About this RNA
Structure probing data (DMS) for a 177-nucleotide construct. In probing experiments dimethyl sulfate is read out at A N1 and C N3, which are open when not base-paired. DMS adducts were read by reverse transcription with MarathonRT.
RNA sequence: GGGAACGACUCGAGUAGAGUCGAAAAGAUAUGGACCAACUUCGAUAAGAGGUCCAUCGGAAACGAUGGCCUCUUUUGACGAAGGGUCCUAAGUCAAAAGAGGGCAACUCUUCGGAGUUGCCCUCAACUAUUCAUUGUCGUUCGCGACAAUGAAUAGAAAAGAAACAACAACAACAAC
Reactivity to DMS in 0.01 (KOAc 150mM, MgCl2 10mM, bicine 150mM(pH8.5), 24C), signal-to-noise 3, nucleotides 027 to 126: g020a030u000a300u010g000g000a000c010c000a090a180c020u000u000c000g010a160u000a010a010g000a020g000g000u020c010c000a010u010c000g000g000a120a070a130c000g010a010u010g000g000c000c000u000c000u000u000u000u000g000a130c110g010a040a030g010g000g000u000c000c000u010a000a080g000u000c020a070a060a150a130g000a010g010g010g000c000a000a000c000u000c000u000u000c170g020g000a020g010u000u000g000c010c000c000u000c000a000a050